Conditions: 150 mM KOAc, 10 mM MgCl2 and 150 mM bicine (pH 8.5), 24 C. Structure probing data (DMS and 2A3) for a 207-nucleotide construct. For DMS, 3,201 sequencing reads were counted.
RNA sequence: GGGAACGACUCGAGUAGAGUCGAAAAACUCAGAUUCAAAGAUGAUUAGGAUUGCAAAGUAGUUGAGAUUCAACACUUCUGGUGUUUAGAUUAGGCAUACAGAAUUGCAGGAACUUGCCCACUAUUCCAUAACAGAGAACGAAAUCUAAAGCCAUGAGACGACGUAAAUAUUCGUAUUUACGUCGUCAAAAGAAACAACAACAACAAC
Reactivity to DMS in 0.01 (KOAc 150mM, MgCl2 10mM, bicine 150mM(pH8.5), 24C), signal-to-noise 2, nucleotides 027 to 156: a110c030u000c030a150g000a120u010u000c060a140a070a120g000a080u000g000a090u000u000a120g020g020a080u000u000g000c020a080a050a150g040u000a080g000u010u000g020a110g020a140u010u000c000a030a060c030a040c040u010u000c060u000g000g020u000g010u000u010u000a100g030a100u000u000a090g010g000c020a090u020a150c030a050g020a060a040u000u000g000c040a120g000g030a050a060c070u010u000g020c000c010c000a130c140u000a140u000u000c030c030a110u010a060a100c030a070g010a100g000a040a130c050g000a080a060a060u000c040u010a040a080a100g000c020c030a020u000g010a290
Reactivity to 2A3 in 0.01 (KOAc 150mM, MgCl2 10mM, bicine 150mM(pH8.5), 24C), signal-to-noise 4, nucleotides 027 to 156: a010c060u070c020a040g050a120u200u050c070a090a080a050g070a100u110g000a030u100u120a010g030g040a050u040u130g050c060a070a050a040g030u090a060g020u050u050g040a040g030a170u130u080c020a020a020c020a010c080u060u030c050u040g000g000u040g080u030u040u060a050g010a060u070u110a020g000g050c010a000u070a070c010a110g090a100a080u120u090g000c030a020g020g090a040a050c030u070u060g010c000c000c000a050c020u080a070u100u000c010c010a010u050a100a100c030a080g080a010g050a150a040c070g050a080a040a000u010c010u060a030a100a010g010c000c030a060u110g030a030
DMS adducts were read by reverse transcription with MarathonRT. The 2A3 profile rests on 2,236 reads.